The data come from the RNA Mapping Database (RMDB), library OK2TRN. The record gives the reactivity of an RNA of 177 nucleotides to DMS and 2A3. For DMS the reverse transcriptase was MarathonRT. High DMS reactivity at an A or C suggests that its Watson-Crick edge is free. For 2A3 the reverse transcriptase was SuperScript II with manganese.
[RMDB]
RNA sequence: GGGAACGACUCGAGUAGAGUCGAAAACGCCUGGGAUUCAUGUUGUGCAGAACCACCAGCACGGUGUAUCCGGUGCACUUGGGGAAUUUGUCAUGCAACUUGGAAGGGAAGGCAUGAAAGAAUUUGGAUGUAAAGAGGUGUUCGCACCUCUUUACAUAAAAGAAACAACAACAACAAC
Reactivity to DMS in 0.01 (KOAc 150mM, MgCl2 10mM, bicine 150mM(pH8.5), 24C), signal-to-noise 5, nucleotides 027 to 126: c200g010c020c020u000g020g010g000a150u000u000c040a030u010g000u000u010g010u000g010c030a060g010a090a140c100c030a050c030c020a130g010c040a050c040g010g010u010g010u010a120u010c010c020g030g000u010g010c010a070c170u000u010g010g000g000g010a140a090u000u000u000g000u010c220a060u010g000c020a030a130c040u000u000g000g010a060a110g000g000g010a130a060g010g010c020a070u010g010a050a070a120g010a070a100u000u000u000g010g000
Reactivity to 2A3 in 0.01 (KOAc 150mM, MgCl2 10mM, bicine 150mM(pH8.5), 24C), signal-to-noise 3, nucleotides 027 to 126: c070g030c010c010u080g000g060g090a070u070u020c000a000u080g050u130u030g020u090g010c020a030g030a090a060c020c030a060c010c010a010g040c010a030c060g000g030u130g050u050a090u060c030c030g110g040u070g000c040a020c070u060u100g040g000g020g060a050a150u140u070u060g120u070c040a050u140g030c020a040a030c020u030u050g060g040a050a040g040g010g040a030a000g050g000c010a010u040g070a080a110a040g130a020a020u230u180u140g120g070